[RMDB]
RNA sequence: GGGAACGACUCGAGUAGAGUCGAAAAUGUGGUGCUAAGUAUAUCUUGUUUACCUUAUCUUUCUUUGGAAAACGUUUUGAAGUCUGGUUGGAUUUGUCACAUCAUGCCUGUUGCCUAGCACUGCCACCUUCAAACGGGCAUUCGUGCCCGUUUGAAGAAAAGAAACAACAACAACAAC
Reactivity to DMS in 0.01 (KOAc 150mM, MgCl2 10mM, bicine 150mM(pH8.5), 24C), signal-to-noise 2, nucleotides 027 to 126: u020g020u010g010g000u000g000c020u000a010a090g000u000a060u040a050u000c050u000u000g010u000u000u010a060c050c010u000u000a100u000c040u050u000u010c060u000u020u010g000g010a060a020a140a150c080g010u030u010u000u040g020a050a170g020u010c030u000g000g050u010u000g000g000a230u000u010u010g000u000c090a030c090a100u000c030a070u000g000c000c000u030g000u000u000g000c030c020u000a030g000c000a040c000u010g000c010c190a080c090
Reactivity to 2A3 in 0.01 (KOAc 150mM, MgCl2 10mM, bicine 150mM(pH8.5), 24C), signal-to-noise 3, nucleotides 027 to 126: u140g040u050g020g000u000g030c020u020a020a010g050u010a100u000a060u300c060u030u070g050u080u080u140a060c000c000u040u090a080u090c010u020u110u000c040u090u050u100g010g000a020a050a020a010c010g090u030u020u040u210g060a060a020g040u000c030u050g050g010u110u030g030g010a040u010u030u210g090u170c050a010c000a110u070c010a020u100g000c000c010u030g000u060u000g020c000c000u010a000g000c000a000c010u030g000c010c000a010c020

Structure probing data (DMS and 2A3) for a 177-nucleotide construct. For DMS the reverse transcriptase was MarathonRT. Conditions: 150 mM KOAc, 10 mM MgCl2 and 150 mM bicine (pH 8.5), 24 C.